RNA sequence: GGGAACGACUCGAGUAGAGUCGAAAAACAAAGAGCGUACAUCUCUCUCAGACUGUACGACAGUCUGACUCUCUCGUACAACUCGCUGACGAGAGACAGAGAGCGUUCAAAGCAGCGAGUAAAAAAACUAAAUCUUUAACUUCGGUUAAAGAUUUAGAAAAGAAACAACAACAACAAC
Reactivity to DMS in 0.01 (KOAc 150mM, MgCl2 10mM, bicine 150mM(pH8.5), 24C), signal-to-noise 3, nucleotides 027 to 126: a090c030a070a080a200g010a030g000c030g000u010a110c210a110u010c000u020c010u000c080u010c010a000g000a020c010u000g010u010a090c300g000a120c010a030g010u000c000u010g010a040c160u000c000u000c000u000c000g000u000a070c100a080a030c000u010c010g010c000u000g010a050c010g000a000g000a010g000a050c160a030g010a020g000a030g000c040g020u000u010c020a080a110a100g010c050a040g000c010g000a010g000u020a000a000a060a080a070a070a070
Reactivity to 2A3 in 0.01 (KOAc 150mM, MgCl2 10mM, bicine 150mM(pH8.5), 24C), signal-to-noise 3, nucleotides 027 to 126: a010c060a010a140a030g030a000g020c010g010u080a060c100a300u030c020u000c000u000c000u000c000a000g000a000c010u030g020u180a150c140g150a070c100a000g000u000c000u010g020a050c010u010c000u000c000u000c020g000u020a040c050a140a040c160u000c010g000c000u000g000a000c010g000a000g010a010g000a010c020a040g010a020g000a000g010c010g010u020u020c060a120a040a050g070c000a000g000c010g030a010g020u020a020a070a010a010a000a000a000